[RMDB]
RNA sequence: GGGAACGACUCGAGUAGAGUCGAAAACGCUGGGCUCGACCGCACGAAUCUGAUCUAGUGACUACCCACCCUCACUGAAGCGCGCACGGUGAGGAGGUCACUAGAUCAGACUAUGCGGAGCCUGUGCUGAAGCGCGCACGGCAACCGAAAGGUGCGACUGACUUCUUUAGUUCGCUAAAGAAGUCAGAAAAGAAACAACAACAACAAC
Reactivity to 2A3 in 0.01 (KOAc 150mM, MgCl2 10mM, bicine 150mM(pH8.5), 24C), signal-to-noise 6, nucleotides 027 to 156: c030g000c010u030g000g000g000c020u040c110g250a120c100c060g050c030a030c080g150a080a300u010c000u000g000a000u000c000u010a000g000u010g000a010c010u110a140c070c070c030a070c010c020c000u010c000a000c000u040g030a300a050g030c030g000c010g010c020a020c020g000g000u000g000a000g000g000a010g010g000u000c000a000c000u000a000g000a000u000c000a000g000a000c010u050a040u120g000c010g010g000a000g000c000c000u010g040u030g000c000u060g030a120a040g000c010g000c000g000c020a010c000g040g000c020a040a060c010c010g080a090a030a010g030g000u020g010c000g020a030
Reactivity to DMS in 0.01 (KOAc 150mM, MgCl2 10mM, bicine 150mM(pH8.5), 24C), signal-to-noise 2, nucleotides 027 to 156: c060g030c020u010g000g010g000c000u000c020g000a260c030c000g020c000a050c040g020a080a040u010c000u000g020a020u000c010u000a000g030u000g040a020c000u000a090c080c010c060a300c070c000c020u040c030a010c000u000g000a050a080g000c020g030c010g020c000a300c030g050g000u000g010a010g030g010a040g020g010u010c000a010c000u000a020g000a010u010c000a020g000a000c020u000a030u000g010c000g000g000a050g010c000c000u000g010u000g020c060u000g020a050a070g030c040g050c030g070c010a260c060g040g030c020a080a140c020c040g010a070a070a160g040g020u000g000c020g000a200